This 177-nucleotide RNA was probed chemically with DMS and 2A3. It was measured as part of the RMDB library OK2TST. For DMS the reverse transcriptase was MarathonRT. Conditions: 150 mM KOAc, 10 mM MgCl2 and 150 mM bicine (pH 8.5), 24 C. For 2A3, 3,129 sequencing reads were counted. Values cover nucleotides 27 to 126.
RNA sequence: GGGAACGACUCGAGUAGAGUCGAAAAUACACAUAAGCAUAUUGCUUUUGCGAUCAAUAUCUUAGUUGCAUUAUUUUUCGUAACAGUACUCGCAUUUAAAAAAGGAUAUAGCUAUGUACCAAUGACACGUCAAUGCAUGAUUCGUCAUGCAUUGACGAAAAGAAACAACAACAACAAC
Reactivity to DMS in 0.01 (KOAc 150mM, MgCl2 10mM, bicine 150mM(pH8.5), 24C), signal-to-noise 3, nucleotides 027 to 126: u000a100c270a070c020a060u000a060a060g010c020a040u000a010u000u010g010c010u000u000u000u000g030c000g020a040u000c180a100a090u010a070u020c050u010u010a070g010u010u000g010c050a100u010u000a150u000u010u000u000u000c080g040u010a010a010c030a060g000u000a070c150u010c050g020c020a130u010u020u010a000a050a090a040a050a010g000g000a050u010a010u000a050g020c000u010a020u000g000u010a160c020c030a040a100u010g020a160c220a180
Reactivity to 2A3 in 0.01 (KOAc 150mM, MgCl2 10mM, bicine 150mM(pH8.5), 24C), signal-to-noise 4, nucleotides 027 to 126: u070a000c060a000c010a060u050a100a050g020c020a000u010a050u030u130g300c010u080u010u020u060g010c010g030a030u060c060a100a080u050a070u220c030u100u190a060g000u040u010g000c030a030u040u150a220u160u300u020u080u200c090g000u010a000a020c000a030g000u030a030c020u000c010g000c030a030u110u180u300a090a220a030a000a000a010g020g000a010u010a000u000a040g000c010u000a000u010g010u020a040c010c040a060a130u140g050a050c020a010